[RMDB]
RNA sequence: GGGAACGACUCGAGUAGAGUCGAAAAGCGCCUGGUCAAUCUCUGAGACAGUGAAGCUGCAGUCACGUCCCCGUAUGCCGGAGCCUGGUUGUAGGGCGAAUCACCGCUUGCGGUUAUCCGCCGCUUAAUGAUAGUGCGGAUUCGUCCGCACUAUCAUAAAAGAAACAACAACAACAAC
Reactivity to DMS in 0.01 (KOAc 150mM, MgCl2 10mM, bicine 150mM(pH8.5), 24C), signal-to-noise 1, nucleotides 027 to 126: g030c120g010c020c030u000g020g040u000c040a090a070u020c040u010c060u000g000a200g000a070c040a050g020u010g000a070a120g020c040u000g000c040a070g000u010c070a090c100g010u000c010c010c010c110g020u000a080u010g000c070c040g030g000a090g010c040c060u000g000g000u000u010g000u020a090g020g010g010c010g000a040a040u000c060a050c020c040g010c060u010u010g020c000g040g010u000u010a060u000c080c090g000c000c030g000c040u000u000a100